[RMDB]
RNA sequence: GGGAACGACUCGAGUAGAGUCGAAAAGCCCCACGCUUCGGCGUGGGGCAAAUAAAAUCAGCGGUAAGCUGGCGUAAAAUAUUACCCCUGAACGCCAGCUUAAAACACCCUUGUUCGCAAGGGUGAAGGUAUCAUCAAAGUUCGCUUUGAUGAUACCAAAAGAAACAACAACAACAAC
Reactivity to DMS in 0.01 (KOAc 150mM, MgCl2 10mM, bicine 150mM(pH8.5), 24C), signal-to-noise 1, nucleotides 027 to 126: g000c000c000c000c030a000c070g090c010u000u010c260g020g040c000g090u000g000g040g000g020c000a000a000a050u010a030a030a030a090u000c090a030g030c170g010g010u020a020a040g010c000u000g000g000c010g010u000a080a140a060a250u010a190u000u000a300c120c000c010c030u000g000a150a040c030g030c000c000a000g000c030u000u000a000a030a060a250c010a010c000c000c000u000u000g010u010u040c120g020c010a000a010g000g000g010u000g000a050a000
Reactivity to 2A3 in 0.01 (KOAc 150mM, MgCl2 10mM, bicine 150mM(pH8.5), 24C), signal-to-noise 1, nucleotides 027 to 126: g000c070c070c000c000a000c000g090c030u060u090c290g150g000c000g000u000g000g100g000g010c000a010a010a010u020a000a030a000a040u090c050a010g120c040g250g080u060a010a000g010c000u010g020g000c000g010u040a050a010a030a020u170a150u200u170a200c000c050c000c000u020g040a000a000c000g000c000c010a010g000c000u010u000a000a000a030a000c000a000c010c000c000u000u000g040u060u070c160g000c120a010a000g000g000g020u010g000a000a000
Chemical mapping of a 177-nucleotide RNA with DMS and 2A3. It was measured as part of the RMDB library M2PK50. The RNA was probed in 150 mM KOAc, 10 mM MgCl2 and 150 mM bicine (pH 8.5) at 24 C. For 2A3 the reverse transcriptase was SuperScript II with manganese.